[RMDB]
RNA sequence: GGGAACGACUCGAGUAGAGUCGAAAAAAAAACAUGCAGAAAUAAGCAUGGUGCUCAAAAAGUAGAACGAAAGAUCAAAAAAUGAGAAAAUGAUCCAACGAACUACAAGAGCGGAUCAUAAAAAAAACGUAUCUGAUUAGUUCGCUAAUCAGAUACGAAAAGAAACAACAACAACAAC
Reactivity to 2A3 in 0.01 (KOAc 150mM, MgCl2 10mM, bicine 150mM(pH8.5), 24C), signal-to-noise 1, nucleotides 027 to 126: a000a000a000a000a030c050a000u050g010c000a010g200a260a140a040u270a230a000g070c000a000u000g030g050u050g000c000u000c000a090a180a000a050a020g040u010a010g000a010a000c000g000a080a030a000g010a000u000c000a000a070a130a120a000a150u260g060a060g070a010a110a020a110u030g000a010u000c000c000a010a040c000g020a000a000c000u010a010c050a190a000g000a000g000c100g020g000a090u140c110a030u270a060a070a030a000a000a000a000a000